[RMDB]
RNA sequence: GGGAACGACUCGAGUAGAGUCGAAAAGAUAUGGACCACGCGUAACGCGAAGAACGUGUGUCUGAGCUUAUAUCGGAAACGAUAUAAGCAACACGUAUCACGGGAGCGUUGAUCGUGGUCCUAAGUCCUGCCUUCUAAUGUUCGCAUUAGAAGGCAGAAAAGAAACAACAACAACAAC
Reactivity to 2A3 in 0.01 (KOAc 150mM, MgCl2 10mM, bicine 150mM(pH8.5), 24C), signal-to-noise 3, nucleotides 027 to 126: g060a040u130a080u230g000g020a000c000c000a010c000g000c050g080u170a020a000c010g050c030g170a260a070g010a060a020c020g020u020g000u010g050u060c090u100g010a020g000c000u020u000a000u010a000u010c030g030g000a080a050a040c010g000a000u000a000u000a010a000g050c000a000a000c080a010c070g050u060a050u180c010a000c040g020g030g030a080g000c020g000u000u020g030a080u170c020g000u000g000g000u030c000c000u000a010a000g020u000c010
Reactivity to DMS in 0.01 (KOAc 150mM, MgCl2 10mM, bicine 150mM(pH8.5), 24C), signal-to-noise 4, nucleotides 027 to 126: g000a080u010a240u020g000g010a030c000c000a000c000g030c300g000u000a020a010c000g040c010g010a160a200g010a140a190c000g020u010g010u000g000u000c030u010g000a190g000c000u000u000a010u000a000u000c010g020g010a180a060a220c000g010a030u000a000u000a010a010g000c000a020a030c160a240c180g000u000a110u000c020a010c020g000g000g000a080g010c000g010u000u000g000a080u000c010g020u000g010g020u000c000c000u010a020a080g000u000c030
Source: RMDB library TTRINS, as collected in RNAgym.
The record gives the reactivity of an RNA of 177 nucleotides to 2A3 and DMS.
The DMS profile rests on 4,842 reads.
For 2A3 the reverse transcriptase was SuperScript II with manganese.
Values cover nucleotides 27 to 126.
The reactions ran in a buffer of 150 mM KOAc, 10 mM MgCl2 and 150 mM bicine (pH 8.5), at 24 C.